[RMDB]
RNA sequence: GGGAACGACUCGAGUAGAGUCGAAAAUUCGUAUGCAGCUGGAAUGAAUGCAGAGAUUGAAGCGCAUGAACAAGUUCGGCGUUCGUCAGUGGAAUGUCAAUUUGCAGAGCCUCAAGCUCCAAGAAACAGACAUUCCAGGAUUCGUCCUGGAAUGUCUAAAAGAAACAACAACAACAAC
Reactivity to 2A3 in 0.01 (KOAc 150mM, MgCl2 10mM, bicine 150mM(pH8.5), 24C), signal-to-noise 1, nucleotides 027 to 126: u040u020c000g020u060a020u090g060c030a030g000c050u100g030g140a180a070u100g000a130a030u060g000c020a020g000a020g010a030u090u090g090a040a030g000c020g000c160a120u030g020a100a090c030a090a000g000u030u090c120g070g000c000g000u000u010c000g050u060c020a060g030u080g200g030a040a020u020g010u000c000a000a060u000u030u110g000c020a010g000a000g090c030c020u090c020a020a020g030c000u000c050c000a090a050g180a100a030a030c070
Reactivity to DMS in 0.01 (KOAc 150mM, MgCl2 10mM, bicine 150mM(pH8.5), 24C), signal-to-noise 2, nucleotides 027 to 126: u010u000c030g000u000a120u000g000c050a080g000c040u000g000g030a080a060u020g000a050a120u010g010c050a070g010a040g000a050u000u000g010a060a110g030c050g040c100a080u000g000a090a170c020a040a060g020u000u000c120g000g000c000g010u000u000c010g000u020c140a130g060u000g000g000a020a020u000g030u000c050a000a090u000u000u000g010c090a120g020a070g010c110c040u000c150a030a130g020c000u000c000c090a080a200g010a110a090a070c230